[RMDB]
RNA sequence: GGGAACGACUCGAGUAGAGUCGAAAAGAAAAAGUUUACGUUUGAAUUAACAAGAUUCGUUUAGCAAUUUUGUGUUCAUAUUGAGAGAGAAUGAUUAUGUGUCAUACAUGAAAAAUCUAAAUGACUAUCGUCAAAAUUACUUCGGUAAUUUUGACGAAAAAGAAACAACAACAACAAC
Reactivity to DMS in 0.01 (KOAc 150mM, MgCl2 10mM, bicine 150mM(pH8.5), 24C), signal-to-noise 1, nucleotides 027 to 126: g000a060a100a120a120a130g020u000u020u010a090c080g010u000u000u000g010a020a020u010u020a130a030c060a040a010g000a020u000u000c000g020u030u020u020a120g040c290a020a010u000u000u000u000g020u010g000u000u000c000a010u000a060u000u000g020a150g020a140g000a020g000a070a010u010g010a200u010u000a010u020g010u010g000u000c070a070u010a070c050a050u020g020a010a040a060a040a040u010c050u000a040a070a040u000g000a070c110u000a110
Source: RMDB library OK2TST, as collected in RNAgym.
The record gives the reactivity of an RNA of 177 nucleotides to DMS.
Values are in units of 0.01, from 0 to 300, in steps of 10.
For DMS the reverse transcriptase was MarathonRT.